[RMDB]
RNA sequence: GGGAACGACUCGAGUAGAGUCGAAAAGUAAGCCUACUGAGUAUGCUACAGAUUGUCAGAUACUAACUCUUUGUGCCUUUGCUGUAAACCCUAAGGAUGCAUAUUUAACAGCUGUUAAACAGGGUCACCGUUGAUCCGAAUUCGUUCGGAUCAACGGAAAAGAAACAACAACAACAAC
Reactivity to 2A3 in 0.01 (KOAc 150mM, MgCl2 10mM, bicine 150mM(pH8.5), 24C), signal-to-noise 2, nucleotides 027 to 126: g020u060a090a000g040c000c010u060a060c040u070g020a040g060u080a000u140g110c020u030a050c010a090g050a300u110u160g060u110c020a010g030a070u060a120c020u090a190a060c010u060c000u070u110u070g020u060g000c030c000u120u110u060g020c010u000g040u090a080a110a070c000c000c000u000a030a030g090g010a130u130g050c050a020u040a150u150u110u040a150a100c040a060g090c040u110g050u060u160a110a060a020c080a020g080g000g010u040c000a020
Reactivity to DMS in 0.01 (KOAc 150mM, MgCl2 10mM, bicine 150mM(pH8.5), 24C), signal-to-noise 2, nucleotides 027 to 126: g000u000a030a150g020c050c040u010a070c050u000g000a030g020u000a080u000g010c060u000a130c020a060g060a170u000u010g000u000c090a030g000a090u000a070c050u020a080a060c040u010c030u010u000u010g020u000g050c030c040u000u050u010g010c020u010g010u010a090a050a110c050c010c020u040a060a110g020g000a080u020g000c020a080u000a040u000u000u000a070a060c010a150g020c150u010g010u020u010a020a040a130c150a120g010g010g000u000c130a130